[RMDB]
RNA sequence: GGGAACGACUCGAGUAGAGUCGAAAAGAUAUGGACCGAUACCUUCUUGGAUUUAUAUCGGAAACGAUAUUGUCAGAAGUGUAUUCGGUCCUAAGUCAAAACGUGGGUCUCUUCGGAGACCCACGAAGUGUAGCCAUAAGUUCGCUUAUGGCUACACAAAAGAAACAACAACAACAAC
Reactivity to DMS in 0.01 (KOAc 150mM, MgCl2 10mM, bicine 150mM(pH8.5), 24C), signal-to-noise 1, nucleotides 027 to 126: g000a040u000a300u000g000g000a010c010c000g000a020u000a000c000c000u000u010c000u030u020g030g020a030u020u000u000a010u000a010u010c010g000g000a140a110a250c000g020a010u000a010u000u000g020u000c000a030g010a000a000g020u020g000u000a000u000u020c000g010g000u000c000c000u000a010a140g020u000c050a110a120a100a180c000g050u000g000g020g000u000c000u000c010u000u000c150g060g000a010g000a000c010c000c000a000c000g000a000a050
Reactivity to 2A3 in 0.01 (KOAc 150mM, MgCl2 10mM, bicine 150mM(pH8.5), 24C), signal-to-noise 1, nucleotides 027 to 126: g020a010u110a060u240g010g010a000c000c000g000a000u030a030c000c000u070u040c020u160u290g230g010a060u300u300u140a030u080a000u020c000g020g000a010a110a040c010g000a000u000a000u000u040g020u000c000a000g000a030a050g040u120g010u300a030u050u130c010g000g040u010c000c000u000a010a010g010u020c000a000a010a080a070c010g000u000g000g040g000u000c010u000c000u030u070c140g150g010a000g000a010c000c020c000a000c000g000a030a010